Record summary
The record gives the reactivity of an RNA of 177 nucleotides to DMS and 2A3. For 2A3, 2,413 sequencing reads were counted.
RNA sequence: GGGAACGACUCGAGUAGAGUCGAAAACGGUUCGGCGCGGCGCACACGAUCGUGUCGCUGCACGUGCACCACCUGGUGCUCGACGGGCAGUCGCUGCUGCUGCUGAUCGGCACGCUGCUCGACGCAACUACUAAAUCGGCUUCGGCCGAUUUAGUAGAAAAGAAACAACAACAACAAC
Reactivity to DMS in 0.01 (KOAc 150mM, MgCl2 10mM, bicine 150mM(pH8.5), 24C), signal-to-noise 2, nucleotides 027 to 126: c160g000g010u000u000c010g020g070c100g030c030g010g010c010g060c150a010c010a020c040g020a160u010c230g000u010g000u000c000g020c020u000g000c000a060c010g020u000g040c050a070c030c000a220c110c120u000g000g030u010g020c010u000c050g010a230c010g010g000g000c000a030g010u020c100g040c190u000g030c000u000g010c150u010g000c110u000g030a060u000c010g020g000c000a040c020g000c030u000g000c000u000c000g030a050c050g010c130a050a230
Reactivity to 2A3 in 0.01 (KOAc 150mM, MgCl2 10mM, bicine 150mM(pH8.5), 24C), signal-to-noise 2, nucleotides 027 to 126: c040g070g010u060u050c010g070g000c030g000c000g070g030c010g060c020a000c000a000c070g190a300u250c170g010u030g010u020c030g030c010u000g000c020a010c020g020u040g010c070a010c010c010a080c050c110u170g020g010u020g020c010u000c070g070a080c000g020g010g000c000a030g080u230c080g080c170u050g000c000u000g000c040u080g080c070u160g060a290u140c000g010g000c000a010c000g000c000u000g020c000u030c010g040a030c030g020c040a000a080